[RMDB]
RNA sequence: GGGAACGACUCGAGUAGAGUCGAAAAUCAAUCGCAUUGUUGGGUGAAAGUUGGAGGAUAAAUCCUCACCAAGAUUUAAAUUAAGCAAGAGAUAUAAGGCCGCUCCUUAUAUUGCGACUUGCAUAAAGAUAUCCGGCAAAGUUCGCUUUGCCGGAAACACAUUGUCCUUGUUCGCAAGGACAAUGUGAAAAGAAACAACAACAACAAC
Reactivity to DMS in 0.01 (KOAc 150mM, MgCl2 10mM, bicine 150mM(pH8.5), 24C), signal-to-noise 1, nucleotides 027 to 156: u000c090a120a070u000c120g050c060a200u010u000g060u020u000g000g000g000u000g010a080a030a070g030u030u000g010g020a060g000g050a200u010a100a060a250u000c020c000u000c020a090c100c030a010a030g010a080u010u010u000a130a060a290u000u020a140a160g050c010a030a010g020a300g010a040u000a010u000a030a000g000g020c060c300g040c300u000c020c000u010u000a020u000a020u000u000g030c000g040a120c000u000u000g000c010a110u000a030a040a120g000a150u010a100u000c010c030g010g030c010a000a000a070g010u000u010c300g010c000u000u000u000g010c020c010g000g000a000a000a030